[RMDB]
RNA sequence: GGGAACGACUCGAGUAGAGUCGAAAAACGUGGUCUACGGACCACGAAUUGGUGGGAGCUCGGAGAGUGGAGCUGUGGGUGUCAGGGUCAGGCACACGCACAGCACCUCACUGAGCUCCUUCCAAAACAGUUAUUCAGAAUUCGUUCUGAAUAACUGAAAAGAAACAACAACAACAAC
Reactivity to 2A3 in 0.01 (KOAc 150mM, MgCl2 10mM, bicine 150mM(pH8.5), 24C), signal-to-noise 9, nucleotides 027 to 126: a000c010g000u000g000g000u000c010u030a090c290g110g000a000c000c000a000c000g000a020a100u040u020g000g000u000g000g000g000a000g000c000u000c010g020g000a020g000a010g030u140g010g060a140g020c000u000g000u000g000g060g000u010g010u020c060a090g160g090g120u110c060a040g060g010c030a000c000a020c030g230c010a000c000a000g000c000a010c000c000u000c000a030c000u000g000a000g000c000u000c000c000u000u000c000c000a000a000a000a010
Reactivity to DMS in 0.01 (KOAc 150mM, MgCl2 10mM, bicine 150mM(pH8.5), 24C), signal-to-noise 7, nucleotides 027 to 126: a110c020g020u000g000g010u000c000u000a110c210g030g010a020c000c000a000c000g000a030a030u010u010g000g000u000g000g000g000a010g020c000u000c000g010g000a070g010a020g010u010g020g010a140g020c000u000g010u000g000g000g010u000g020u000c030a100g010g010g020u010c150a090g000g010c080a010c000a070c040g000c000a010c000a010g000c000a070c000c000u000c000a050c000u000g000a010g000c000u000c000c000u000u000c000c000a020a030a100a210
An RNA of 177 nucleotides, treated with 2A3 and DMS and read out base by base. For DMS the reverse transcriptase was MarathonRT. Values cover nucleotides 27 to 126. The RNA was probed in 150 mM KOAc, 10 mM MgCl2 and 150 mM bicine (pH 8.5) at 24 C.